This 177-nucleotide RNA was probed chemically with DMS and 2A3. For DMS, 1,267 sequencing reads were counted. DMS adducts were read by reverse transcription with MarathonRT. Source: RMDB library M2PK50, as collected in RNAgym. Values cover nucleotides 27 to 126. For 2A3 the reverse transcriptase was SuperScript II with manganese. The RNA was probed in 150 mM KOAc, 10 mM MgCl2 and 150 mM bicine (pH 8.5) at 24 C.

[RMDB]
RNA sequence: GGGAACGACUCGAGUAGAGUCGAAAACGACUUACCUUCGGGUAAGUCGACAUAGGUGAGUUCAACGGAUAGCUGCCUAGGUGAGUUCAUCGGAUAGCUGCCACAUGUAACGGUUCGCCGUUACAAAGUCUGCAAUUCGUUUCGACGAAUUGCAGACAAAAGAAACAACAACAACAAC
Reactivity to DMS in 0.01 (KOAc 150mM, MgCl2 10mM, bicine 150mM(pH8.5), 24C), signal-to-noise 2, nucleotides 027 to 126: c000g000a010c000u000u000a010c000c000u000u010c200g040g010g000u000a000a000g000u000c000g000a040c120a050u000a130g000g020u000g000a060g000u000u000c010a040a130c100g000g000a110u000a080g010c080u000g020c050c000u010a090g070g000u000g000a100g000u000u000c020a040u000c030g010g010a040u010a120g010c040u010g020c010c060a110c210a070u000g000u010a000a020c000g010g000u000u000c190g020c020c000g000u000u000a000c000a060a010a050
Reactivity to 2A3 in 0.01 (KOAc 150mM, MgCl2 10mM, bicine 150mM(pH8.5), 24C), signal-to-noise 1, nucleotides 027 to 126: c000g000a010c020u000u000a000c000c000u090u070c230g060g000g020u000a000a000g000u000c000g010a010c010a070u170a020g170g020u090g100a040g020u090u070c090a050a060c110g040g000a080u080a050g000c000u040g010c040c040u050a100g070g010u050g000a140g030u090u180c050a030u090c000g070g020a080u050a060g010c030u060g050c030c000a060c000a130u100g000u010a000a020c000g000g030u030u030c230g000c060c000g000u000u000a000c000a000a060a000